[RMDB]
RNA sequence: GGGAACGACUCGAGUAGAGUCGAAAACACUAGUAUUGACUGUGAUGCUGAUUUUGAACAUGUGCAGCAGCAGGGUGAAGUUGAGUUGGUACCAUCAGUUUUUACACCUGACUUUAAGUUUUCCUUUGAAAAGAAGUUAGAACCAACAGUUAAACAACUGUAGGAAAGAGUUCGCUCUUUCCUACAGAAAAGAAACAACAACAACAAC
Reactivity to 2A3 in 0.01 (KOAc 150mM, MgCl2 10mM, bicine 150mM(pH8.5), 24C), signal-to-noise 3, nucleotides 027 to 156: c040a020c010u060a010g050u060a120u050u140g100a060c050u020g020u040g060a100u070g010c030u010g040a080u070u060u160u210g060a100a050c060a120u220g040u030g030c020a010g000c010a000g000c020a020g150g000g020u010g020a040a040g020u080u110g010a030g020u000u040g030g000u010a030c020c000a030u090c040a020g040u090u020u070u160u090a020c020a020c010c010u000g010a020c000u020u030u050a030a000g030u020u030u010u000c030c010u060u030u170g080a080a090a030a070g020a020a020g020u070u100a050g000a080a040c070c010a080a040c030a040g020u140u260a290a060a000c030a040a020
Reactivity to DMS in 0.01 (KOAc 150mM, MgCl2 10mM, bicine 150mM(pH8.5), 24C), signal-to-noise 2, nucleotides 027 to 156: c010a120c050u010a130g050u000a110u010u000g020a040c000u000g010u000g010a060u010g030c030u020g000a100u000u000u010u030g010a130a070c060a070u000g020u000g010c010a070g030c030a050g000c040a180g000g000g040u000g000a030a050g010u000u020g000a140g060u000u010g020g010u000a040c040c000a050u000c100a120g000u010u020u020u000u000a070c020a060c060c010u000g000a010c010u000u000u000a030a130g000u000u000u000u000c020c050u000u000u000g000a070a060a100a230g010a020a070g010u000u010a060g000a070a060c020c020a040a060c040a130g010u010u000a050a050a090c040a060a140
Conditions: 150 mM KOAc, 10 mM MgCl2 and 150 mM bicine (pH 8.5), 24 C. Structure probing data (2A3 and DMS) for a 207-nucleotide construct. The DMS profile rests on 4,115 reads. Values are in units of 0.01, from 0 to 300, in steps of 10. It was measured as part of the RMDB library OK3TST. 2A3 adducts were read by reverse transcription with SuperScript II with manganese.